[RMDB]
RNA sequence: GGGAACGACUCGAGUAGAGUCGAAAAGAUGCCCAACUCGACUUUCUGCCCCGGCGCCAGCGGCUCCGCGCUUGGCACAACAAUGGUAUGCGUGGUUUGCGGCCCUAAUUUAUUCAGCACGCGACUGGCACACUUCUCACUUCGGUGAGAAGUGUGCAAAAGAAACAACAACAACAAC
Reactivity to 2A3 in 0.01 (KOAc 150mM, MgCl2 10mM, bicine 150mM(pH8.5), 24C), signal-to-noise 1, nucleotides 027 to 126: g120a170u150g050c000c000c000a080a030c050u180c130g000a020c000u050u050u050c050u000g000c000c030c000c000g070g000c030g010c000c000a000g000c010g040g000c050u060c000c000g050c060g000c000u080u080g050g000c020a000c000a110a260c000a130a120u150g050g010u100a040u090g000c000g000u020g060g000u100u040u090g030c010g020g000c000c000c000u010a000a000u050u030u300a110u110u050c000a000g000c070a010c020g120c000g060a040c000u000g040
Chemical mapping of a 177-nucleotide RNA with 2A3. 2A3 adducts were read by reverse transcription with SuperScript II with manganese. The 2A3 profile rests on 459 reads. Conditions: 150 mM KOAc, 10 mM MgCl2 and 150 mM bicine (pH 8.5), 24 C. High 2A3 reactivity points to a flexible backbone, as in loops and unpaired stretches.